Chemical mapping of a 177-nucleotide RNA with DMS and 2A3. For 2A3, 2,611 sequencing reads were counted. For DMS the reverse transcriptase was MarathonRT. Conditions: 150 mM KOAc, 10 mM MgCl2 and 150 mM bicine (pH 8.5), 24 C.

RNA sequence: GGGAACGACUCGAGUAGAGUCGAAAACGCUCCUCCGCGUGAAGCGCGUCAAGCCGAUGAUAGUUGAUGCUAGGAGGGUGGUCGCGAGGGCCGGGCUGGGCGGGCGACUAGAGCCUCUCGGCGAGCGAGAGUAGAUCUUGUUCGCAAGAUCUACUCUAAAAGAAACAACAACAACAAC
Reactivity to DMS in 0.01 (KOAc 150mM, MgCl2 10mM, bicine 150mM(pH8.5), 24C), signal-to-noise 4, nucleotides 027 to 126: c060g010c020u000c010c020u010c030c020g020c080g030u000g010a110a100g000c080g020c010g010u010c070a060a110g000c040c040g000a110u010g010a120u010a090g010u000u000g010a100u010g010c070u010a130g010g000a070g010g010g030u000g000g010u000c030g000c070g000a130g020g010g010c050c040g010g000g010c120u010g000g010g010c100g000g000g000c060g000a040c090u010a070g020a110g010c020c020u000c030u000c060g000g010c140g000a080g010c090g010
Reactivity to 2A3 in 0.01 (KOAc 150mM, MgCl2 10mM, bicine 150mM(pH8.5), 24C), signal-to-noise 3, nucleotides 027 to 126: c010g010c030u020c000c020u030c040c020g000c010g050u070g200a100a010g050c040g000c010g100u040c080a120a040g060c070c030g080a120u130g060a060u090a140g100u080u170g080a080u170g040c020u020a040g070g020a040g020g040g060u050g000g020u060c040g000c040g100a090g030g050g000c080c010g070g060g000c080u080g030g040g060c120g030g070g010c030g000a020c020u030a030g030a030g090c010c010u030c020u020c030g000g000c010g010a040g020c050g060